[RMDB]
RNA sequence: GGGAACGACUCGAGUAGAGUCGAAAAACAAGUUAAGAAGCUUCAAUUCUGGCGUUACGCAUAGCUGGCUGUUAGCUCUAUUCCUUACUAGUUCACGACUAACAGUUUUUGUAACCAAAACCUGAGCCAUUACAGUACUAUUCGUAGUACUGUAAUGAAAAGAAACAACAACAACAAC
Reactivity to 2A3 in 0.01 (KOAc 150mM, MgCl2 10mM, bicine 150mM(pH8.5), 24C), signal-to-noise 9, nucleotides 027 to 126: a000c040a040a010g040u120u120a170a050g060a070a010g050c020u120u100c090a060a190u120u040c040u070g040g000c050g040u040u050a050c050g020c070a080u080a120g040c030u030g050g000c000u010g010u050u030a020g010c040u000c010u060a090u060u070c010c000u060u090a110c060u050a040g090u050u110c070a040c100g020a010c020u020a040a010c010a010g000u000u000u020u050u070g030u020a020a020c020c010a020a030a010a030c010c040u060g020a010g040c010
Reactivity to DMS in 0.01 (KOAc 150mM, MgCl2 10mM, bicine 150mM(pH8.5), 24C), signal-to-noise 9, nucleotides 027 to 126: a080c100a080a060g010u010u010a080a080g010a070a090g010c030u000u010c110a050a110u000u000c040u000g010g010c090g010u010u000a030c070g010c150a080u010a080g020c140u010g000g000c020u000g000u000u000a020g000c090u000c040u010a170u000u000c020c030u000u010a110c190u010a110g010u000u000c080a070c130g000a040c020u000a020a050c030a020g010u000u000u010u010u010g010u010a040a060c070c050a040a030a050a070c110c060u000g000a070g010c130
Background
An RNA of 177 nucleotides, treated with 2A3 and DMS and read out base by base. Source: RMDB libraries RFM100 and RFMREP, as collected in RNAgym. Values cover nucleotides 27 to 126.